[RMDB]
RNA sequence: GGGAACGACUCGAGUAGAGUCGAAAACAACAUAGAUCACAUCUUGGAGCUGGCGUGCACGGUUCUGGGCGUCGAGACCAUAAUGGUGUCUUUGCUGGAUGGGGAAAAGAAGUUUAUAAAGUGUGGACUAGACUAGAAGGUUCGCCUUCUAGUCUAGAAAAGAAACAACAACAACAAC
Reactivity to 2A3 in 0.01 (KOAc 150mM, MgCl2 10mM, bicine 150mM(pH8.5), 24C), signal-to-noise 4, nucleotides 027 to 126: c000a020a000c010a050u150a060g100a080u100c040a010c010a130u030c030u030u070g050g030a060g010c020u030g020g000c050g040u100g030c100a020c100g080g010u120u060c020u060g010g060g000c000g050u090c060g030a020g020a040c010c010a020u110a200a080u210g020g000u060g030u020c000u060u080u080g030c010u010g030g030a080u060g000g020g020g000a050a030a010a010g080a070a020g020u070u150u040a240u110a100a150a020g070u060g000u040g060g000a040
Reactivity to DMS in 0.01 (KOAc 150mM, MgCl2 10mM, bicine 150mM(pH8.5), 24C), signal-to-noise 4, nucleotides 027 to 126: c060a070a100c100a080u000a070g010a090u000c080a070c050a200u000c050u010u000g020g010a110g010c030u010g000g000c040g030u000g010c070a040c090g020g010u000u010c060u000g000g000g000c060g000u000c060g010a100g000a060c030c030a130u010a070a080u010g010g030u000g010u000c030u000u000u000g030c050u000g000g000a090u010g000g000g010g010a050a030a070a070g010a050a100g020u000u000u010a080u000a070a060a100g010u000g030u000g000g000a240